[RMDB]
RNA sequence: GGGAACGACUCGAGUAGAGUCGAAAAUUCAGAGGACAGCGGCAAACGGGGUAGUAAUGCAUAGGUAUGUACCCUCUGGUCGGGAAUAGCCACGGGAAACUGUGGGUAAUGCCCGAUGAUCUGGUGACCAUUAACUACCUUUCGAGGUAGUUAAUGGAAAAGAAACAACAACAACAAC
Reactivity to 2A3 in 0.01 (KOAc 150mM, MgCl2 10mM, bicine 150mM(pH8.5), 24C), signal-to-noise 9, nucleotides 027 to 126: u070u020c000a010g020a020g030g020a020c010a040g020c030g050g010c030a020a040a050c060g010g010g030g020u040a030g040u030a070a080u060g020c030a050u060a120g090g050u100a070u120g040u050a060c010c010c000u020c030u050g030g000u010c000g000g000g010a010a030u020a030g070c000c000a000c000g010g000g010a030a070a040c000u000g000u020g010g010g000u040a020a020u180g030c000c000c000g000a010u010g010a020u020c060u060g090g030u070g080a040
Reactivity to DMS in 0.01 (KOAc 150mM, MgCl2 10mM, bicine 150mM(pH8.5), 24C), signal-to-noise 8, nucleotides 027 to 126: u020u010c030a060g000a070g010g010a080c060a050g010c070g010g020c060a040a090a120c120g000g000g000g020u010a050g010u020a070a080u010g010c050a090u020a070g020g010u010a040u010g010u000a070c060c010c000u010c060u000g000g010u010c020g010g000g000a030a030u000a150g000c000c000a000c000g000g000g000a150a080a150c000u000g010u000g000g000g000u000a090a060u020g000c010c000c010g000a020u010g000a070u010c050u010g000g000u010g000a230